Structure probing data (DMS and 2A3) for a 177-nucleotide construct. The RNA was probed in 150 mM KOAc, 10 mM MgCl2 and 150 mM bicine (pH 8.5) at 24 C. The data come from the RNA Mapping Database (RMDB), library M2PK50. For 2A3, 4,339 sequencing reads were counted. The DMS profile rests on 3,683 reads. For DMS the reverse transcriptase was MarathonRT.

[RMDB]
RNA sequence: GGGAACGACUCGAGUAGAGUCGAAAAGAGUUUCUGUUCGCAGAAACUCAGUGCGUAGCUGCGUUAAAAUAAUAGCUACGCUUAAUAAAUUUUUAUAACGCAAAAGUGGUUAUUUCGAUAACCACAAUGAUACUUUACGAUUCGUCGUAAAGUAUCAAAAAGAAACAACAACAACAAC
Reactivity to DMS in 0.01 (KOAc 150mM, MgCl2 10mM, bicine 150mM(pH8.5), 24C), signal-to-noise 3, nucleotides 027 to 126: g000a010g000u000u000u000c000u000g010u010u010c170g030c000a020g010a020a010a000c000u000c010a080g020u010g000c000g020u010a000g010c000u010g010c020g010u010u000a030a100a120a120u020a100a090u010a050g000c000u000a000c000g000c000u000u000a030a070u000a050a060a120u010u010u010u010u030a060u010a080a010c010g010c010a140a070a130a130g000u000g000g000u000u000a010u000u000u010c130g000a020u000a000a010c000c000a000c000a030a040
Reactivity to 2A3 in 0.01 (KOAc 150mM, MgCl2 10mM, bicine 150mM(pH8.5), 24C), signal-to-noise 3, nucleotides 027 to 126: g010a010g000u000u000u000c010u010g040u030u060c250g000c060a000g000a000a010a000c000u000c000a000g040u040g000c000g010u000a000g010c020u030g000c010g020u020u030a050a150a130a140u150a190a170u120a140g000c000u000a000c000g000c000u000u020a000a010u020a000a020a000u020u030u000u030u050a220u060a070a010c000g000c000a060a020a060a110g000u000g010g010u000u020a000u030u120u110c230g030a010u000a000a000c000c000a000c010a020a000